[RMDB]
RNA sequence: GGGAACGACUCGAGUAGAGUCGAAAAUCUAAGCUGGUAGAUCGAAAACCUAAAUACGAACAACUUAAGUUCUGUCGUAGUGGCUCCUAAUAUCCAAGCCCUAUGACACUAUUGUGGUUCAAACAGCGAUUAAGAGAUCCUUCGGGAUCUCUUAAUCAAAAGAAACAACAACAACAAC
Reactivity to DMS in 0.01 (KOAc 150mM, MgCl2 10mM, bicine 150mM(pH8.5), 24C), signal-to-noise 2, nucleotides 027 to 126: u000c000u010a030a220g000c000u010g020g000u000a000g000a020u010c020g000a080a040a160a110c010c020u000a020a040a080u010a020c200g010a020a040c040a030a020c020u010u000a110a140g000u000u010c090u000g030u010c000g020u010a000g010u010g020g010c030u000c140c150u000a060a090u010a100u020c170c170a050a050g000c000c000c010u000a010u000g010a010c010a020c050u000a020u000u000g000u000g010g000u000u010c010a050a090a050c020a010g040c020
Reactivity to 2A3 in 0.01 (KOAc 150mM, MgCl2 10mM, bicine 150mM(pH8.5), 24C), signal-to-noise 2, nucleotides 027 to 126: u040c010u060a070a000g050c000u010g000g080u050a020g000a050u060c090g060a030a050a090a100c010c010u000a050a020a020u140a070c070g000a020a010c020a030a040c050u170u130a160a020g030u060u140c100u110g000u010c020g000u000a000g000u050g120g000c010u040c070c040u210a290a220u120a070u210c070c070a020a000g010c000c000c010u020a020u000g000a000c000a000c000u000a050u050u100g060u020g040g030u010u030c060a060a130a150c000a060g020c020
Overview
The data come from the RNA Mapping Database (RMDB), library RFMREP. This 177-nucleotide RNA was probed chemically with DMS and 2A3. The reactions ran in a buffer of 150 mM KOAc, 10 mM MgCl2 and 150 mM bicine (pH 8.5), at 24 C. Values cover nucleotides 27 to 126. DMS adducts were read by reverse transcription with MarathonRT. The 2A3 profile rests on 1,485 reads. For DMS, 1,241 sequencing reads were counted.